[RMDB]
RNA sequence: GGGAACGACUCGAGUAGAGUCGAAAAGAUAUGGAGCCUCUACUCCAUGCAUGACAGUAAGCGUAUUCGGAAACGAAUAUACGCUAUAAUUGAAACACUGUCAUGCAUGGAGUAGGGCUCCUAAGUCGUAUACGUAAGCCUUCGGGCUUACGUAUACAAAAGAAACAACAACAACAAC
Reactivity to DMS in 0.01 (KOAc 150mM, MgCl2 10mM, bicine 150mM(pH8.5), 24C), signal-to-noise 1, nucleotides 027 to 126: g030a200u010a300u000g020g000a030g010c000c000u000c000u030a010c000u000c000c000a010u000g010c010a000u000g010a000c000a020g000u000a160a030g000c000g010u010a010u000u010c030g020g000a140a140a270c000g010a040a000u010a110u000a040c040g040c010u000a070u010a100a070u000u010g030a270a200a150c300a020c040u020g010u000c010a000u000g000c000a030u000g000g000a000g000u010a000g000g010g000c010u000c030c000u000a010a060g010u000c040

The data come from the RNA Mapping Database (RMDB), library TTRINS. Chemical mapping of a 177-nucleotide RNA with DMS. The reactions ran in a buffer of 150 mM KOAc, 10 mM MgCl2 and 150 mM bicine (pH 8.5), at 24 C.